[RMDB]
Notes:
An RNA of 207 nucleotides, treated with DMS and 2A3 and read out base by base. DMS adducts were read by reverse transcription with MarathonRT. As a SHAPE reagent, 2A3 marks flexible, mostly unpaired nucleotides at the ribose 2'-OH.

RNA sequence: GGGAACGACUCGAGUAGAGUCGAAAAUCUUGUAGUUGAGAUGGAGGAAGGCCACUGUCUCCUGCUCGCCCCUGGGAGCUGAAUGUCUCGGUGUAAAAUCCGAUCGUACAUUUGUUCAACUCUGAGCUAGGAGAAAAGCUGCCCUGUGGCGCGAGGACAAAAUAAUGGGUUUCGACCCAUUAUUUUGAAAAGAAACAACAACAACAAC
Reactivity to DMS in 0.01 (KOAc 150mM, MgCl2 10mM, bicine 150mM(pH8.5), 24C), signal-to-noise 2, nucleotides 027 to 156: u010c030u010u020g020u000a110g000u000u020g010a100g010a110u010g010g010a100g000g020a060a120g010g030c050c040a100c050u010g010u000c060u000c010c020u000g000c010u000c020g020c020c020c010c020u010g000g010g010a060g050c020u000g010a020a020u000g000u010c020u000c000g000g030u000g020u000a120a090a180a280u010c000c010g010a010u010c100g020u000a050c030a050u000u000u010g010u000u000c030a040a080c010u000c010u000g010a180g040c100u000a120g000g010a130g000a060a020a110a080g000c040u010g010c000c000c020u000g010u000g010g010c000g000c050g010a110g000g010a240
Reactivity to 2A3 in 0.01 (KOAc 150mM, MgCl2 10mM, bicine 150mM(pH8.5), 24C), signal-to-noise 2, nucleotides 027 to 156: u040c030u030u080g070u100a090g000u020u050g030a020g010a080u080g030g000a020g030g020a090a060g070g030c060c020a070c060u050g030u030c010u020c020c010u060g060c000u010c000g010c000c000c000c000u020g020g000g000a010g000c030u050g040a010a000u010g010u000c000u000c020g010g000u030g010u030a040a060a030a060u020c000c010g020a040u080c060g030u100a010c000a030u010u010u080g050u080u060c040a060a050c040u020c040u070g020a050g120c060u070a050g050g000a030g040a020a080a000a000g010c030u180g220c000c000c000u040g040u110g030g030c090g000c010g050a010g010g010a020

The reactions ran in a buffer of 150 mM KOAc, 10 mM MgCl2 and 150 mM bicine (pH 8.5), at 24 C.